The record gives the reactivity of an RNA of 177 nucleotides to DMS and 2A3. It was measured as part of the RMDB library OK1LIB. Reactivities are given for positions 27 through 126.
RNA sequence: GGGAACGACUCGAGUAGAGUCGAAAAGAAAAAGUCGUCGAGUCCGGAGAAUAUCGAGUAGUGGAUAGAGACGAAAGUCUCGACGAUCCGGAGAGUAUCGACUACAAGAUAUCGAGACGACGAAAAAGGGUAAUUAUUCCUUCGGGAAUAAUUACCCAAAAGAAACAACAACAACAAC
Reactivity to DMS in 0.01 (KOAc 150mM, MgCl2 10mM, bicine 150mM(pH8.5), 24C), signal-to-noise 2, nucleotides 027 to 126: g010a060a080a080a060a060g020u000c000g030u000c000g000a160g010u040c030c020g000g000a080g000a070a070u020a010u000c010g010a300g010u000a020g010u000g000g000a060u000a090g000a010g000a010c000g010a110a060a200g000u010c010u000c000g000a150c180g020a070u000c010c030g030g010a110g010a230g010u010a000u000c010g000a080c030u000a000c040a030a180g000a010u000a000u000c010g000a140g000a000c020g010a040c000g010a030a030a070a120a070
Reactivity to 2A3 in 0.01 (KOAc 150mM, MgCl2 10mM, bicine 150mM(pH8.5), 24C), signal-to-noise 2, nucleotides 027 to 126: g090a000a150a010a000a000g050u010c010g000u000c010g010a010g090u010c090c040g080g030a080g040a090a000u040a010u040c030g020a030g010u020a040g010u070g080g060a100u070a050g010a010g000a000c020g010a050a020a010g000u010c000u010c000g100a120c030g030a060u000c020c010g040g020a130g000a000g070u070a010u030c030g060a000c000u000a000c010a000a030g000a020u010a000u000c020g000a020g000a000c010g000a010c000g030a010a020a010a010a010